An RNA of 177 nucleotides, treated with DMS and read out base by base. Reactivities are given for positions 27 through 126.
[RMDB]
RNA sequence: GGGAACGACUCGAGUAGAGUCGAAAAGAUAUGGAUGAGCGAUGAGAUACGGUUUCGGAAACGAAAUUAUCGAGCUUUGUCCUAAGUCAAAGUAACGUACAUGGCCUUCGGGCCAUGUACGUUACAAGCUGAGGAAGCAGUUCGCUGCUUCCUCAGCAAAAGAAACAACAACAACAAC
Reactivity to DMS in 0.01 (KOAc 150mM, MgCl2 10mM, bicine 150mM(pH8.5), 24C), signal-to-noise 1, nucleotides 027 to 126: g000a060u020a240u020g010g000a000u010g000a010g000c010g010a130u020g020a160g000a090u010a050c300g000g010u000u000u010c000g010g010a060a100a300c000g010a010a010a000u000u000a030u000c000g000a090g010c010u000u000u010g010u000c000c000u000a060a130g000u000c010a080a040a160g000u010a000a000c000g000u000a000c010a010u000g000g060c000c000u010u040c200g040g000g020c000c000a000u000g020u000a000c000g020u000u000a010c010a060a130
The data come from the RNA Mapping Database (RMDB), library TTRDEL. DMS adducts were read by reverse transcription with MarathonRT.